[RMDB]
RNA sequence: GGGAACGACUCGAGUAGAGUCGAAAAAAUUUUCUUGAUGCGUGGGAUCGAAAUUGCACUCAUGCUGAAUUCAUCCAGCCCCAUGCCCAAUAGCAACAGUGUAGCACGUUCAUCGCCAGCAAGUUCACAUUUUAAUCGCUUUCGAGCGAUUAAAAUGAAAAGAAACAACAACAACAAC
Reactivity to 2A3 in 0.01 (KOAc 150mM, MgCl2 10mM, bicine 150mM(pH8.5), 24C), signal-to-noise 1, nucleotides 027 to 126: a000a000u110u100u070u020c060u040u050g090a030u050g030c030g060u050g030g020g050a050u090c080g030a150a080a150u210u090g010c050a030c040u080c000a080u020g060c000u020g040a050a030u070u160c050a050u000c040c000a000g020c050c000c000c000a030u070g000c000c000c000a030a060u080a070g000c000a020a030c030a050g030u010g030u120a040g020c030a000c050g030u110u080c030a050u020c080g000c020c030a010g030c020a060a020g040u030u050c080a010
Reactivity to DMS in 0.01 (KOAc 150mM, MgCl2 10mM, bicine 150mM(pH8.5), 24C), signal-to-noise 3, nucleotides 027 to 126: a050a080u000u010u010u010c030u000u000g010a080u000g000c060g040u000g000g000g000a070u000c080g000a030a070a090u010u020g020c100a120c030u000c100a120u010g000c030u010g010a120a050u000u000c100a060u010c090c040a080g000c050c050c000c040a110u010g020c020c010c030a060a080u020a070g030c040a030a060c110a060g010u000g020u000a070g010c070a050c070g000u010u000c090a040u000c090g010c050c040a050g000c040a050a060g000u000u010c060a140